[RMDB]
RNA sequence: GGGAACGACUCGAGUAGAGUCGAAAACAACACGUCCUCGUCGUACAGAGUGGUAACAUGUGUCACCACAUUUCCAAGCUUGGGUACACGGGCUUGACCCAACCCCUUGGGCGGAUGGUGGCACAUGAAAAGAAGUAACACUUCGGUGUUACUUCAACGUAACAUUCUAGUUCGCUAGAAUGUUACGAAAAGAAACAACAACAACAAC
Reactivity to DMS in 0.01 (KOAc 150mM, MgCl2 10mM, bicine 150mM(pH8.5), 24C), signal-to-noise 5, nucleotides 027 to 156: c040a060a130c060a100c070g000u000c010c010u000c050g000u000c080g050u000a170c080a120g010a120g010u000g000g030u000a060a150c020a040u010g030u000g010u010c000a010c000c000a020c060a200u000u000u000c020c000a020a170g000c090u010u010g010g010g040u000a080c150a050c080g010g010g030c010u000u000g010a160c010c000c000a080a060c020c000c000c010u010u000g010g000g000c270g010g010a110u000g020g030u000g010g010c010a020c010a000u000g000a030a060a100a140g020a020a030g010u000a000a020c010a020c000u000u010c290g040g010u000g000u000u000a000c000u000u000c000a020a110
Reactivity to 2A3 in 0.01 (KOAc 150mM, MgCl2 10mM, bicine 150mM(pH8.5), 24C), signal-to-noise 9, nucleotides 027 to 156: c040a010a020c040a020c080g110u070c010c020u050c030g160u040c030g060u150a080c070a100g050a030g050u120g050g070u150a110a020c000a000u000g000u000g000u010c000a000c010c010a050c050a220u080u080u020c010c000a010a010g010c040u040u040g010g000g000u020a020c050a030c050g010g000g010c030u260u300g180a300c000c000c000a000a040c010c000c000c000u000u010g000g000g000c010g030g000a060u020g000g000u000g000g000c000a000c000a000u000g000a000a000a000a020g000a000a000g000u000a000a000c000a000c010u030u080c260g080g000u000g000u000u000a000c000u000u000c000a010a000

Chemical mapping of a 207-nucleotide RNA with DMS and 2A3. The data come from the RNA Mapping Database (RMDB), library M2RFPK. For 2A3 the reverse transcriptase was SuperScript II with manganese. Reactivities are given for positions 27 through 156. The RNA was probed in 150 mM KOAc, 10 mM MgCl2 and 150 mM bicine (pH 8.5) at 24 C. As a SHAPE reagent, 2A3 marks flexible, mostly unpaired nucleotides at the ribose 2'-OH.